[RMDB]
RNA sequence: GGGAACGACUCGAGUAGAGUCGAAAAGAUAUGGACUCACUAGCGGAGACGUUGAAAUCGGAAACGAUGGAGUCUCCGAACUACUAGGAAGAGUCCUAAGUCAAAGAAAGUCCUUCGGGACUUUCAACUUGAUAGUAGGGUUCGCCCUACUAUCAAGAAAAGAAACAACAACAACAAC
Reactivity to 2A3 in 0.01 (KOAc 150mM, MgCl2 10mM, bicine 150mM(pH8.5), 24C), signal-to-noise 2, nucleotides 027 to 126: g020a000u110a020u190g000g000a000c000u020c010a040c020u000a000g070c000g030g000a010g000a030c010g150u290u100g020a050a050a010u010c010g010g010a100a110a020c010g010a020u020g000g020a010g000u000c000u000c000c020g000a000a000c010u090a000c000u020a020g010g110a180a180g020a050g000u010c000c000u010a010a010g010u000c050a110a040a090g000a000a010a010g000u010c000c030u060u140c300g090g040g010a000c000u000u000u000c000a000a020
Reactivity to DMS in 0.01 (KOAc 150mM, MgCl2 10mM, bicine 150mM(pH8.5), 24C), signal-to-noise 3, nucleotides 027 to 126: g000a030u010a300u010g000g000a020c000u000c000a080c010u000a020g000c010g000g000a020g010a010c000g010u010u020g030a060a100a010u010c000g020g000a150a110a190c020g010a030u010g000g020a120g020u000c000u000c000c000g010a020a020c060u010a300c010u000a010g000g030a100a120g020a030g000u000c000c010u000a040a090g010u010c030a080a130a130g000a030a000a000g000u000c000c000u000u010c240g000g000g000a000c000u000u000u000c000a060a180
An RNA of 177 nucleotides, treated with 2A3 and DMS and read out base by base. For 2A3, 3,025 sequencing reads were counted. Values cover nucleotides 27 to 126.